[RMDB]
RNA sequence: GGGAACGACUCGAGUAGAGUCGAAAAGUCUGUGAGCAGUUCGGCAGGUGAAACGGCCGCCAGUUCUGUCGCGGCGUCGUCGACGAAACCGGCCGGAUUGGCCGCGGCGGCGGUCAUCAGCUCGGCGCCAGAUAGGCCGGUUCGCCGGCCUAUCUGGAAAAGAAACAACAACAACAAC
Reactivity to DMS in 0.01 (KOAc 150mM, MgCl2 10mM, bicine 150mM(pH8.5), 24C), signal-to-noise 1, nucleotides 027 to 126: g020u050c020u040g000u000g000a040g040c030a080g000u000u000c050g000g010c000a090g040g020u000g010a080a020a050c000g000g030c000c010g000c000c070a060g010u010u030c160u000g020u010c130g000c030g000g000c000g010u030c040g020u010c010g000a140c200g010a070a260a040c040c000g010g000c040c000g010g010a040u020u020g000g010c010c020g050c060g040g000c090g020g040c000g000g000u000c010a040u040c130a120g000c000u020c060g000g000c020g000
Reactivity to 2A3 in 0.01 (KOAc 150mM, MgCl2 10mM, bicine 150mM(pH8.5), 24C), signal-to-noise 3, nucleotides 027 to 126: g070u060c060u060g160u130g070a030g000c060a010g020u060u050c010g010g000c010a030g000g010u050g010a170a080a060c000g070g020c020c020g010c000c000a100g040u180u110c090u210g170u090c020g050c070g030g030c010g040u050c040g000u040c000g030a220c080g010a080a020a030c000c010g000g000c010c000g080g010a100u100u030g000g010c000c000g020c020g050g040c080g080g000c010g020g000u000c010a120u010c030a090g040c000u000c010g040g010c050g010